[RMDB]
RNA sequence: GGGAACGACUCGAGUAGAGUCGAAAACUCGGAAAACAGGCUGAUCCCCAGCGAGGCGCCGAGGAUCAACUCGUGGCCGAGCACGCUCACCGGCUGGCGCAACUGGACCAGCAGGCGUUCGGCCAGACAUGGUACCUCGAUUCGUCGAGGUACCAUGAAAAGAAACAACAACAACAAC
Reactivity to DMS in 0.01 (KOAc 150mM, MgCl2 10mM, bicine 150mM(pH8.5), 24C), signal-to-noise 3, nucleotides 027 to 126: c010u000c020g000g010a020a080a140a130c110a070g000g020c030u010g000a100u000c040c010c030c020a080g000c020g000a210g030g010c130g050c040c020g040a020g010g000a070u000c090a050a030c060u000c090g030u000g040g030c010c010g010a020g030c060a070c120g040c080u000c140a220c120c050g010g020c000u010g000g000c020g030c070a150a120c200u010g010g000a130c020c000a030g020c010a060g010g000c110g020u010u000c020g000g000c010c000a050g020a140
Reactivity to 2A3 in 0.01 (KOAc 150mM, MgCl2 10mM, bicine 150mM(pH8.5), 24C), signal-to-noise 2, nucleotides 027 to 126: c000u000c000g040g030a090a090a050a060c040a030g050g120c010u020g030a050u040c010c000c000c030a020g020c040g100a140g060g050c120g000c000c000g010a000g000g010a060u140c070a020a050c010u010c110g180u050g010g000c020c000g000a000g020c050a010c060g010c010u070c040a100c060c060g090g000c000u000g000g000c020g000c070a130a230c140u180g060g080a210c000c030a000g000c000a010g000g010c010g030u070u030c000g020g000c020c000a010g010a010